[RMDB]
Record summary
Conditions: 150 mM KOAc, 10 mM MgCl2 and 150 mM bicine (pH 8.5), 24 C. This 177-nucleotide RNA was probed chemically with 2A3 and DMS. It was measured as part of the RMDB library OK2TRN. Values cover nucleotides 27 to 126.

RNA sequence: GGGAACGACUCGAGUAGAGUCGAAAAGCACGUAACGAGUACGCAGGGCGUUGCGGGUGGCAUCGUGAGUGUUAUGGCGUAACGACAUGCGCGUCAUAUCCAGCGCAUCGCUGAACGCCUGGCGCACCGGUGGUCAAAAGUUCGCUUUUGACCACCGAAAAGAAACAACAACAACAAC
Reactivity to 2A3 in 0.01 (KOAc 150mM, MgCl2 10mM, bicine 150mM(pH8.5), 24C), signal-to-noise 2, nucleotides 027 to 126: g080c030a020c080g070u110a100a020c020g020a050g100u070a040c060g000c020a030g040g020g000c000g010u000u100g100c020g020g040g040u050g040g010c000a060u050c100g070u030g090a140g020u200g020u090u050a050u070g030g030c010g000u010a110a050c040g110a050c060a110u160g030c020g000c000g050u000c020a030u060a030u090c030c030a010g000c020g010c030a010u000c030g000c040u030g010a030a000c030g000c020c000u020g020g000c010g020c020a010c020
Reactivity to DMS in 0.01 (KOAc 150mM, MgCl2 10mM, bicine 150mM(pH8.5), 24C), signal-to-noise 2, nucleotides 027 to 126: g010c040a060c100g000u030a080a090c060g000a160g010u030a060c040g010c050a160g010g010g000c000g010u000u000g000c000g000g020g000u000g010g010c120a090u030c050g010u000g000a090g000u000g020u000u000a030u000g000g020c000g040u020a110a140c110g010a080c220a070u010g000c070g020c010g020u000c090a050u010a050u000c120c050a200g000c030g000c030a020u000c070g010c040u000g000a110a010c020g010c000c030u000g000g000c000g000c020a030c080